Structure probing data (2A3) for a 207-nucleotide construct. The data come from the RNA Mapping Database (RMDB), library OK3TST. Reactivities are rounded to 0.1 and cut off at 0 and 3. The RNA was probed in 150 mM KOAc, 10 mM MgCl2 and 150 mM bicine (pH 8.5) at 24 C. Values cover nucleotides 27 to 156.
RNA sequence: GGGAACGACUCGAGUAGAGUCGAAAACACUGAUCCGCCCGCGGAGACAGCGUGGUCGUCGGUCCACGCAGUGAGCCGAUCGCUCGCGCCACUUGGAUCGCGAGCGCUAUCCGGUGUCUCGUAGAUGCCCGGGAUCGACAGCUCGUCGCCAGUCAGCCUCGGUGGAUAAAUUCGUUUAUCCACCGAGAAAAGAAACAACAACAACAAC
Reactivity to 2A3 in 0.01 (KOAc 150mM, MgCl2 10mM, bicine 150mM(pH8.5), 24C), signal-to-noise 2, nucleotides 027 to 156: c060a010c080u080g040a030u140c070c030g020c030c050c030g020c070g040g070a070g010a060c060a020g000c010g050u040g020g030u100c050g040u020c070g060g010u000c040c000a070c040g000c020a000g040u030g070a010g010c010c000g000a000u010c010g000c000u000c000g020c000g020c000c030a280c300u270u300g050g000a070u180c010g010c000g020a000g000c010g000c010u090a020u040c100c060g000g000u050g190u040c000u010c010g020u070a100g040a140u190g030c000c010c080g060g030g000a000u050c000g010a020c000a030g020c040u090c120g090u050c000g050c010c000a090g030u080c020a030g020c000